[RMDB]
An RNA of 177 nucleotides, treated with 2A3 and DMS and read out base by base.
For DMS, 1,069 sequencing reads were counted.
For DMS the reverse transcriptase was MarathonRT.
Reactivities are given for positions 27 through 126.
RNA sequence: GGGAACGACUCGAGUAGAGUCGAAAAGUAGUGCUCGAGAGCGAGGCUGUCUCGCAGAGCUUUUAGAUCUUCUGAUCUUUCCCUCCUCCAUAUCGCUUAUGCGUCAAGCGAUAGACGCAUAAUUAAACUCUGGAAGUGAUUUCGAUCACUUCCAGAGAAAAGAAACAACAACAACAAC
Reactivity to 2A3 in 0.01 (KOAc 150mM, MgCl2 10mM, bicine 150mM(pH8.5), 24C), signal-to-noise 1, nucleotides 027 to 126: g070u110a020g100u030g180c030u020c060g190a160g030a030g120c040g050a050g120g000c210u060g100u220c000u040c010g000c000a020g060a030g070c000u020u040u030u010a010g010a000u000c000u270u000c140u300g010a000u000c000u000u010u040c010c000c000u000c000c030u000c020c000a060u040a060u180c050g000c040u060u020a000u010g020c000g010u010c020a000a110g200c050g120a080u110a090g000a000c010g000c010a010u020a020a000u040u040a020a040a030
Reactivity to DMS in 0.01 (KOAc 150mM, MgCl2 10mM, bicine 150mM(pH8.5), 24C), signal-to-noise 1, nucleotides 027 to 126: g010u000a100g020u000g030c020u000c050g000a110g010a070g000c010g010a070g010g040c140u020g000u040c000u000c020g020c010a100g010a240g000c020u010u000u000u000a040g000a010u000c000u010u010c250u000g000a000u000c000u000u000u000c010c000c000u000c020c010u010c000c000a060u000a080u010c060g010c280u010u020a000u000g000c000g000u000c000a080a100g020c240g010a140u010a040g000a030c020g000c000a030u000a030a020u000u020a100a070a130